[RMDB]
RNA sequence: GGGAACGACUCGAGUAGAGUCGAAAAGGCCAAGGCUUCGCUGACGGCGUGCUGAGCGACGAGCAGCUGGAGGCUCUGGAGUCGGACCCGCUGCUCAAGGUCGAGCGCUGCACCUUUUCCGGCAACCAGGUGGGCGAGUGAUGAAUCACGCCAUUGCUGUUUACGAUUCAUUCGUGAAUCGUAAACAAAAAGAAACAACAACAACAAC
Reactivity to 2A3 in 0.01 (KOAc 150mM, MgCl2 10mM, bicine 150mM(pH8.5), 24C), signal-to-noise 4, nucleotides 027 to 156: g050g010c040c030a020a050g060g000c010u100u050c080g020c050u050g040a050c050g010g030c010g010u050g000c050u120g030a060g070c000g030a020c010g020a030g040c000a010g010c010u090g050g010a050g030g020c020u010c060u090g150g060a040g010u010c000g020g050a080c000c000c010g000c000u030g000c000u030c070a100a100g180g000u060c040g040a020g050c020g000c030u130g060c010a060c010c000u070u080u090u070c070c020g030g000c010a060a040c060c040a030g050g020u030g030g050g000c030g020a060g050u060g020a110u080g060a060a050u100c010a020c040g010c040c000a050u050u190g040c060
Reactivity to DMS in 0.01 (KOAc 150mM, MgCl2 10mM, bicine 150mM(pH8.5), 24C), signal-to-noise 2, nucleotides 027 to 156: g030g040c020c030a080a120g020g010c060u000u000c050g030c040u000g000a160c060g020g000c040g050u010g020c110u010g020a160g010c030g010a070c060g000a050g030c000a060g030c040u050g020g010a300g000g000c040u000c050u000g000g010a080g000u000c010g000g010a210c000c030c010g030c020u030g020c020u000c060a150a160g010g000u000c020g010a160g000c030g010c020u030g020c050a070c030c010u000u000u000u110c040c030g030g000c030a120a110c050c010a060g010g000u000g030g000g030c030g000a080g040u000g020a180u010g010a120a120u000c020a070c030g020c040c000a300u010u000g000c040